RNA sequence: GGGAACGACUCGAGUAGAGUCGAAAAAUUAGCGUGCAAAUCGAUUGUGCAGAGGGUCUUUUAGGCCGAGUGAUUCAUGCAAUUUCGAGAUCAGCUGCGCUCGAUCCGCCGCAGUUGCAUCUGCGAAACCAUGAGCGGCUUUCGAGCCGCUCAUGGUAAAAGAAACAACAACAACAAC
Reactivity to 2A3 in 0.01 (KOAc 150mM, MgCl2 10mM, bicine 150mM(pH8.5), 24C), signal-to-noise 1, nucleotides 027 to 126: a000u180u210a010g020c000g000u040g020c000a000a000a160u010c030g110a110u000u140g010u050g040c020a020g100a030g110g220g000u040c000u000u300u030u170a050g030g000c000c050g020a030g050u150g060a130u000u300c060a010u250g000c000a000a100u010u000u010c010g000a000g050a050u060c000a030g010c000u000g000c000g000c100u040c010g220a210u080c080c050g050c060c000g000c000a000g000u010u140g030c110a070u030c020u020g060c010g020a040a000